Description
An RNA of 207 nucleotides, treated with 2A3 and DMS and read out base by base. Conditions: 150 mM KOAc, 10 mM MgCl2 and 150 mM bicine (pH 8.5), 24 C. Source: RMDB library M2RFPK, as collected in RNAgym. 2A3 adducts were read by reverse transcription with SuperScript II with manganese. For 2A3, 11,112 sequencing reads were counted. For DMS, 16,570 sequencing reads were counted.
[RMDB]
RNA sequence: GGGAACGACUCGAGUAGAGUCGAAAAAGCACUGGUACGAUACGUCGUACCAAUGCAGUCGUUGGGAUGGAACGCAAUUAAAUACAUGUGUGACGUGUAUUUGCGAACGACGUAAUUAUUUUUCAAAAUCACGCUAUCGUGUUCGCACGAUAGCGAAUCAUAAUGUUUACUUCGGUAAACAUUAUGAAAAAGAAACAACAACAACAAC
Reactivity to 2A3 in 0.01 (KOAc 150mM, MgCl2 10mM, bicine 150mM(pH8.5), 24C), signal-to-noise 9, nucleotides 027 to 156: a000g000c000a000c010u010g000g010u000a000c000g010a020u010a060c200g110u010c000g000u020a000c000c000a000a000u000g000c010a010g020u010c020g000u010u060g110g030g040a150u140g080g100a150a040c020g000c020a010a040u170u120a140a090a010u030a010c010a010u030g080u030g130u190g280a090c030g010u000g000u000a010u010u020u030g000c010g010a020a010c010g020a000c030g020u040a090a060u140u160a110u050u140u030u040u060c070a070a070a050a080u160c060a030c060g000c000u000a000u000c000g000u010g030u050u040c130g030c080a000c000g000a000u000a000g010c000g000a000a000
Reactivity to DMS in 0.01 (KOAc 150mM, MgCl2 10mM, bicine 150mM(pH8.5), 24C), signal-to-noise 5, nucleotides 027 to 156: a140g040c010a010c000u000g020g030u000a000c010g010a050u010a100c300g050u000c010g000u000a020c010c010a000a000u010g020c020a220g010u000c020g010u000u000g000g010g010a150u000g000g010a090a140c000g000c010a110a240u000u000a040a030a030u000a010c010a010u000g010u000g040u010g020a110c060g070u010g010u000a030u000u000u000g020c150g010a050a130c000g020a110c020g020u000a040a070u010u000a150u010u000u000u000u000c030a050a020a180a130u000c120a140c020g020c000u000a010u000c000g030u000g020u000u000c300g050c000a020c010g000a020u000a000g010c010g020a010a010